[RMDB]
RNA sequence: GGGAACGACUCGAGUAGAGUCGAAAAACAAUCUGUUAGAUCUCCAGCUCCUUCCAUUCCAGGGAUCAAAAAGAUGGAGGGUUUCUUAGGGAAAGAGCAUCUCUCCUAGUAUCUGUCCGAUAAAGAAGCUACGUACCGAAUUCGUUCGGUACGUAGCAAAAGAAACAACAACAACAAC
Reactivity to DMS in 0.01 (KOAc 150mM, MgCl2 10mM, bicine 150mM(pH8.5), 24C), signal-to-noise 1, nucleotides 027 to 126: a150c120a120a030u020c030u000g000u000u000a130g000a110u000c010u000c010c050a070g010c130u000c030c020u010u000c070c030a110u040u010c050c050a150g010g000g020a090u010c110a040a100a050a130a100g010a030u020g010g020a070g020g030g000u000u000u010c030u020u000a130g050g000g000a030a060a030g010a110g020c210a070u000c010u000c020u000c010c010u000a010g010u000a040u000c020u000g000u020c070c050g040a130u010a040a200a160g010a170a110
Reactivity to 2A3 in 0.01 (KOAc 150mM, MgCl2 10mM, bicine 150mM(pH8.5), 24C), signal-to-noise 1, nucleotides 027 to 126: a010c040a010a080u100c040u030g080u120u100a030g000a100u030c010u000c030c030a030g050c010u040c010c010u040u010c030c020a040u060u110c020c040a060g070g000g090a100u100c040a030a090a020a060a000g070a010u060g010g000a000g010g010g010u000u050u000c000u020u040a090g000g000g160a010a080a080g020a050g030c030a050u030c020u000c000u010c010c030u020a030g040u040a050u000c030u060g060u060c010c010g060a040u090a090a140a050g060a080a000
Source: RMDB library OK2TST, as collected in RNAgym.
Structure probing data (DMS and 2A3) for a 177-nucleotide construct.
Values cover nucleotides 27 to 126.